This 207-nucleotide RNA was probed chemically with 2A3. Reactivities are rounded to 0.1 and cut off at 0 and 3. It was measured as part of the RMDB library M2RFOK. The 2A3 profile rests on 891 reads.
[RMDB]
RNA sequence: GGGAACGACUCGAGUAGAGUCGAAAACAUUCUUGAAAAAGUGAUGUAGAUUUAUAGCCCAUAACUUUUUUGAAUUACAUCGACGAUACGGCGUCGAAAGAAAAAUAAAUAGACCGUAUGAACGAAAAAAACAACAGUAGCUUCGGCUACUGUUGAACCUCCAGUUAAAGUUCGCUUUAACUGGAGGAAAAGAAACAACAACAACAAC
Reactivity to 2A3 in 0.01 (KOAc 150mM, MgCl2 10mM, bicine 150mM(pH8.5), 24C), signal-to-noise 1, nucleotides 027 to 156: c000a000u000u080c000u060u180g030a050a030a000a000a020g010u020g010a000u010g000u050a090g020a190u020u300u090a150u140a030g050c000c000c000a030u080a070a050c060u140u080u060u000u020u060g120a100a030u250u060a080c070a150u030c010g010a000c000g020a020u000a000c010g000g000c000g000u000c000g000a010a070a000g050a020a110a000a020a000u060a010a010a010u090a010g080a090c000c010g010u010a000u020g080a040a030c050g010a000a000a080a030a030a080a080c000a000a000c000a000g000u000a000g000c000u020u050c210g060g000c000u000a000c000u050g000u000u000g000a000a000